[RMDB]
RNA sequence: GGGAACGACUCGAGUAGAGUCGAAAAUGCGUAGUGUUAUCGAUUGUAAUAGUGAAAAACCCUUUGAUAGGUUAAGGUGUGAUUUACAAACAGAUGUUGUGUCUGAUGGGUUUUACCCUGUUAAUAUUAAGACAAAUGAAGCCAAGGAGAAUACAACCGUAUUCGACUUUUUCGAAAGUCGAAUACGAAAAGAAACAACAACAACAAC
Reactivity to 2A3 in 0.01 (KOAc 150mM, MgCl2 10mM, bicine 150mM(pH8.5), 24C), signal-to-noise 2, nucleotides 027 to 156: u070g000c020g030u040a040g020u010g060u120u080a040u060c030g050a040u020u060g080u080a100a130u030a100g050u020g110a060a020a010a080a000c020c000c000u040u060u070g140a210u170a060g030g020u070u090a080a060g000g020u050g020u010g030a070u030u090u100a040c070a030a080a010c050a050g060a040u070g020u100u050g040u010g010u000c010u040g020a060u060g020g000g040u050u130u060u140a030c020c000c000u000g030u040u030a070a010u080a070u170u070a030a030g020a010c020a010a090a040u130g010a030a010g000c030c000a040a000g070g020a050g080a030a110u150a100c040a070a010c090
Reactivity to DMS in 0.01 (KOAc 150mM, MgCl2 10mM, bicine 150mM(pH8.5), 24C), signal-to-noise 2, nucleotides 027 to 156: u000g000c050g090u010a090g030u010g020u000u000a070u000c040g010a170u000u000g000u000a110a080u000a130g000u030g000a080a060a070a160a030c030c010c050u000u000u000g000a170u010a070g030g010u000u000a060a050g010g040u020g020u000g010a190u000u000u000a070c040a110a050a120c050a070g000a070u000g000u000u010g020u010g020u000c050u000g000a090u000g000g020g040u020u010u010u000a060c000c000c020u000g010u010u000a030a060u010a120u000u000a040a080g010a060c060a020a060a090u000g010a090a080g010c030c060a030a060g020g010a150g010a040a090u000a030c090a090a190c090